[RMDB]
RNA sequence: GGGAACGACUCGAGUAGAGUCGAAAAGAUAUGGACUCGUCGCGAUAAGCUGUACUCGGAAACGAGUAUACAGCUUUUGACGCGGUACGCGAGUCCUAAGUCAAACCUCAGCGUUCGCGCUGAGGAACCUAAUCAAGCUCUUCGGAGCUUGAUUAGGAAAAGAAACAACAACAACAAC
Reactivity to 2A3 in 0.01 (KOAc 150mM, MgCl2 10mM, bicine 150mM(pH8.5), 24C), signal-to-noise 3, nucleotides 027 to 126: g010a020u080a050u150g000g000a000c010u000c020g140u270c020g060c010g040a090u030a150a000g000c000u020g000u020a000c000u000c020g020g040a050a090a030c000g010a000g000u020a020u010a010c000a000g010c000u000u020u020u060g040a030c010g000c020g010g050u160a080c190g010c000g020a000g000u000c010c000u010a090a010g030u000c030a110a040a160c000c000u000c000a000g000c000g030u110u110c270g000c010g000c090u000g000a010g000g000a000a000
Reactivity to DMS in 0.01 (KOAc 150mM, MgCl2 10mM, bicine 150mM(pH8.5), 24C), signal-to-noise 4, nucleotides 027 to 126: g000a050u000a300u010g010g000a010c010u000c010g010u010c020g030c010g020a140u010a010a010g010c000u000g010u000a020c010u000c000g000g010a110a110a190c000g000a010g010u010a080u000a060c000a000g000c010u000u000u000u000g020a190c050g010c010g000g030u010a090c300g000c010g000a000g000u010c000c000u000a010a100g000u010c050a110a080a160c010c000u000c000a000g020c000g020u010u020c250g020c010g010c000u010g000a000g010g000a020a040
About this RNA:
Chemical mapping of a 177-nucleotide RNA with 2A3 and DMS. It was measured as part of the RMDB library TTRDEL.